The record gives the reactivity of an RNA of 207 nucleotides to 2A3 and DMS. 2A3 adducts were read by reverse transcription with SuperScript II with manganese. It was measured as part of the RMDB library OK3TST. For DMS, 24,464 sequencing reads were counted. Conditions: 150 mM KOAc, 10 mM MgCl2 and 150 mM bicine (pH 8.5), 24 C.
RNA sequence: GGGAACGACUCGAGUAGAGUCGAAAAAGCCUCGUGAUGGCGAUCGCGAAUACACAAACUACACAUUCUUUUUUAGCGAUGGUGGAAAGCCUGGUCUUGCUGACUGGUAUCGUGAAGCAUUCCAGGUUGGUCGCGUAGUGUCAGUAUCGUGCGAGACUAUUUACAUAUCUUUCGAGAUAUGUAAAUAAAAAGAAACAACAACAACAAC
Reactivity to 2A3 in 0.01 (KOAc 150mM, MgCl2 10mM, bicine 150mM(pH8.5), 24C), signal-to-noise 9, nucleotides 027 to 156: a010g060c010c000u020c030g020u040g040a070u110g030g020c010g010a030u060c010g010c000g040a070a060u190a060c090a000c020a070a120a020c020u070a020c060a020c020a120u200u160c090u090u240u110u060u070u090a030g020c030g030a020u020g020g110u090g040g060a110a070a000g010c000c000u000g010g000u020c040u060u240g000c010u020g060a080c010u040g060g110u180a110u280c070g020u110g120a030a010g000c000a000u010u000c000c000a000g000g000u040u050g030g000u020c010g000c020g010u050a060g030u020g030u060c070a010g010u030a040u080c040g010u060g100c030g010a030g020a020c020
Reactivity to DMS in 0.01 (KOAc 150mM, MgCl2 10mM, bicine 150mM(pH8.5), 24C), signal-to-noise 6, nucleotides 027 to 156: a100g010c010c010u000c040g030u010g020a090u000g010g020c020g010a090u000c030g040c010g010a080a080u000a110c080a130c080a120a090a200c050u000a070c030a050c030a120u000u000c020u000u000u010u000u010u000a110g010c110g010a040u000g010g020u000g020g010a120a070a120g000c010c000u000g010g010u000c030u000u010g040c010u000g010a220c080u010g020g010u010a070u000c080g020u010g010a180a070g010c010a060u000u000c020c000a030g020g020u000u000g010g020u000c020g010c020g020u000a080g020u010g020u000c050a100g020u000a090u000c060g010u000g010c000g010a060g020a070c110